This 177-nucleotide RNA was probed chemically with DMS and 2A3. The data come from the RNA Mapping Database (RMDB), library OK2TRN.
[RMDB]
RNA sequence: GGGAACGACUCGAGUAGAGUCGAAAAGUGAAAAAUUUCAGAUUCAGGGUAUGGGGAAUUCCAAUCUAGGAAUUUUUCAUUGCGAUGACUUACUAUUUAAUGAAUUGCAUGUCCUUAGGAUAUAGACGAAUAAUAAUCAUUUCGAUGAUUAUUAUUCAAAAGAAACAACAACAACAAC
Reactivity to DMS in 0.01 (KOAc 150mM, MgCl2 10mM, bicine 150mM(pH8.5), 24C), signal-to-noise 4, nucleotides 027 to 126: g020u000g000a000a010a010a020a030u000u000u000c010a050g010a040u000u010c190a090g020g000g020u010a040u010g010g020g010g020a190a070u010u010c020c020a050a050u000c060u000a170g020g000a010a000u000u000u000u000u000c000a010u000u000g030c030g020a030u010g000a300c200u010u010a050c300u010a100u000u000u010a030a030u000g000a170a030u000u000g000c030a100u000g000u000c000c010u000u020a090g020g010a090u000a090u000a090g010a160c140
Reactivity to 2A3 in 0.01 (KOAc 150mM, MgCl2 10mM, bicine 150mM(pH8.5), 24C), signal-to-noise 3, nucleotides 027 to 126: g020u020g010a030a010a000a010a020u010u020u010c000a010g020a040u060u100c110a030g090g030g060u140a080u150g120g030g000g140a020a030u150u000c000c000a010a010u000c000u040a120g010g000a000a000u000u000u020u000u010c000a000u000u090g000c020g010a010u040g030a020c010u010u080a050c020u100a180u300u300u140a080a030u040g050a030a030u000u030g000c020a020u080g020u030c010c000u060u150a130g050g040a090u110a020u040a250g080a050c060
DMS adducts were read by reverse transcription with MarathonRT.